[RMDB]
RNA sequence: GGGAACGACUCGAGUAGAGUCGAAAAUGACUAAAAAGAAAACUAUACCAUUUCAGUGCAUGCAGAAAGAGCAUUUAGUAACAUUAAGUACCAGCUUAUCAUUAAAAGAAGAAAUUAGAAACUUCCUUUACCUGAUAAAGGUUAUCUACCAAAAACCAAUGAUGAAUGUUUUCGAACAUUCAUCAUUAAAAGAAACAACAACAACAAC
Reactivity to DMS in 0.01 (KOAc 150mM, MgCl2 10mM, bicine 150mM(pH8.5), 24C), signal-to-noise 2, nucleotides 027 to 156: u010g000a150c100u010a040a080a070a180a170g020a110a070a090a150c080u030a100u010a130c050c030a150u000u020u000c060a090g000u020g000c010a070u000g010c020a090g000a070a080a100g000a100g010c010a070u000u000u000a090g030u000a050a090c030a080u020u000a060a110g020u000a060c030c030a140g010c090u000u010a030u000c020a030u010u000a020a010a020a000g010a020a030g000a050a080a120u010u010a170g020a180a150a140c020u000u010c000c000u000u000u000a030c100c080u000g000a050u000a060a070a070g000g020u000u010a010u010c040u020a070c000c040a020a030a030a070a060c110c090
Reactivity to 2A3 in 0.01 (KOAc 150mM, MgCl2 10mM, bicine 150mM(pH8.5), 24C), signal-to-noise 5, nucleotides 027 to 156: u040g020a010c050u100a050a020a040a060a050g090a040a160a030a010c050u090a070u110a300c020c040a090u060u100u110c050a050g030u040g080c020a020u050g000c030a030g090a140a100a000g060a060g010c010a000u020u050u090a040g010u030a050a040c010a060u100u050a060a020g030u030a090c030c010a010g060c020u020u060a020u070c010a050u010u130a060a050a000a000g050a020a010g060a010a110a120u090u070a070g060a030a100a050c010u030u040c010c000u030u040u020a070c020c030u040g010a080u070a080a030a010g010g010u020u040a020u000c020u080a070c040c010a030a050a040a120a040c180c060